[RMDB]
RNA sequence: GGGAACGACUCGAGUAGAGUCGAAAAAAAGAUAUGGAUCUACUCCCCACCUAGUUAUGGUGGCUAUAAUCAGCUUUCGGAAACGAAAGCUGGUAGCCAACGUCUAGAGGUAGAUCCUAAGUCAAAACAGAUCCAUAAGGUUCGCCUUAUGGAUCUGAAAAGAAACAACAACAACAAC
Reactivity to DMS in 0.01 (KOAc 150mM, MgCl2 10mM, bicine 150mM(pH8.5), 24C), signal-to-noise 2, nucleotides 027 to 126: a120a050a130g000a110u000a300u020g020g000a000u000c000u000a000c020u020c120c040c020c100a300c210c000u030a010g010u000u020a010u000g000g000u000g000g020c020u010a080u030a300a080u020c020a000g000c000u000u000u000c000g030g000a110a080a120c020g000a000a030a000g030c000u000g000g000u010a010g000c000c000a000a000c010g000u000c010u010a000g000a260g000g000u020a000g000a010u000c000c010u000a020a070g010u000c100a120a070a140a240
Reactivity to 2A3 in 0.01 (KOAc 150mM, MgCl2 10mM, bicine 150mM(pH8.5), 24C), signal-to-noise 1, nucleotides 027 to 126: a000a000a000g260a110u300a180u300g000g020a020u000c000u000a010c010u140c040c040c030c020a010c010c000u000a030g040u230u150a060u140g000g000u010g050g000c000u030a040u120a230a300u190c000a000g020c000u020u000u010c000g000g000a050a060a080c010g020a000a000a000g000c000u030g000g000u000a000g000c000c000a010a010c000g020u020c000u010a010g000a010g000g030u000a010g000a000u000c000c000u010a070a030g100u120c100a030a090a150a300